[RMDB]
The record gives the reactivity of an RNA of 177 nucleotides to DMS and 2A3.

RNA sequence: GGGAACGACUCGAGUAGAGUCGAAAAAAAAAUAACCAACAAUGUGAUCUUGCUUGCGGAGGCAUAAUUUGCACAGUAUAAAAUCUGCAAGUAGUGCUAUUGUUGGAAAGAAAACUGUGCUAAAAAAGAUGAAUUGAUAGUUCGCUAUCAAUUCAUCAAAAGAAACAACAACAACAAC
Reactivity to DMS in 0.01 (KOAc 150mM, MgCl2 10mM, bicine 150mM(pH8.5), 24C), signal-to-noise 2, nucleotides 027 to 126: a010a070a060a050a080u010a100a160c000c000a000a000c000a010a000u000g010u000g000a170u000c040u000u000g000c020u000u000g010c000g010g000a010g020g040c220a080u000a070a050u000u000u010g010c000a000c010a020g010u000a020u010a070a020a060a130u000c020u000g000c000a000a020g010u000a020g040u000g020c000u000a020u000u000g000u000u000g000g000a010a050a060g010a070a040a100a030c000u010g010u000g000c010u000a000a040a090a090a080a060
Reactivity to 2A3 in 0.01 (KOAc 150mM, MgCl2 10mM, bicine 150mM(pH8.5), 24C), signal-to-noise 2, nucleotides 027 to 126: a000a000a000a000a000u120a050a030c010c020a000a010c000a020a000u230g120u040g300a300u040c020u030u020g000c000u000u000g020c000g010g000a000g000g000c030a060u060a160a080u100u060u000g010c000a010c000a010g000u060a030u030a300a050a040a090u020c010u010g060c000a000a000g030u000a030g080u060g030c000u000a010u010u000g000u000u000g020g000a050a100a010g010a000a060a000a000c000u000g010u030g010c010u040a110a070a050a030a050a000
The data come from the RNA Mapping Database (RMDB), library M2PK90.